[RMDB]
RNA sequence: GGGAACGACUCGAGUAGAGUCGAAAAGAUAUGGACUGAGCUUCAGUCGUGAGUUCUUUUGACGUCAGCCAGUCGGAAACGACUGUGUUGACGAUAAGAACCACGACUGAAGCUCAGUCCUAAGUCAUCUAUCCUAUAUGUUCGCAUAUAGGAUAGAAAAAGAAACAACAACAACAAC
Reactivity to DMS in 0.01 (KOAc 150mM, MgCl2 10mM, bicine 150mM(pH8.5), 24C), signal-to-noise 3, nucleotides 027 to 126: g000a050u000a300u000g000g010a010c000u000g020a020g010c000u000u000c000a010g020u000c000g010u010g000a190g020u000u000c000u000u000u010u000g010a280c130g010u000c000a020g000c020c000a020g000u000c000g010g010a140a100a250c010g000a020c000u000g010u020g010u000u010g010a010c000g000a030u000a010a000g000a010a010c010c010a010c000g000a010c000u000g000a000a000g000c010u000c000a000g000u000c000c000u000a000a070g020u010c030a170